The record gives the reactivity of an RNA of 177 nucleotides to DMS and 2A3. DMS adducts were read by reverse transcription with MarathonRT. The reactions ran in a buffer of 150 mM KOAc, 10 mM MgCl2 and 150 mM bicine (pH 8.5), at 24 C.
RNA sequence: GGGAACGACUCGAGUAGAGUCGAAAAUCGACAAGGCCGCCGUACUUUGCACAGUGUCGUCAAAGGUGAGAAUGAAAUUUCGGUAGUGGGCGAUAUUCCUCCUGCGACUGCGCAACGUAUCGCUCAAAAAAUUAGCAGGAUUCGUCCUGCUAAUUUUAAAAGAAACAACAACAACAAC
Reactivity to DMS in 0.01 (KOAc 150mM, MgCl2 10mM, bicine 150mM(pH8.5), 24C), signal-to-noise 7, nucleotides 027 to 126: u010c050g010a110c080a080a110g010g020c050c040g000c050c040g010u000a060c060u000u000u010g010c060a070c060a090g010u000g020u000c070g020u000c110a040a110a060g010g010u010g000a100g000a060a060u010g000a060a080a130u000u000u000c050g010g020u000a090g020u000g000g010g010c020g000a020u000a050u000u000c040c030u000c080c070u000g000c080g000a130c150u010g020c040g000c040a020a070c110g010u000a010u000c060g010c030u000c020a000a020
Reactivity to 2A3 in 0.01 (KOAc 150mM, MgCl2 10mM, bicine 150mM(pH8.5), 24C), signal-to-noise 3, nucleotides 027 to 126: u050c000g010a010c020a060a010g080g030c010c000g040c010c000g010u020a040c050u050u040u050g020c020a030c020a070g090u080g100u220c020g040u030c040a100a030a040g040g030u080g020a160g050a090a030u100g040a100a070a070u110u130u060c020g060g000u050a090g100u120g040g010g020c000g020a010u010a010u050u050c020c020u040c000c020u040g000c030g060a100c150u190g050c050g000c040a040a000c050g000u000a000u020c010g000c000u000c000a060a130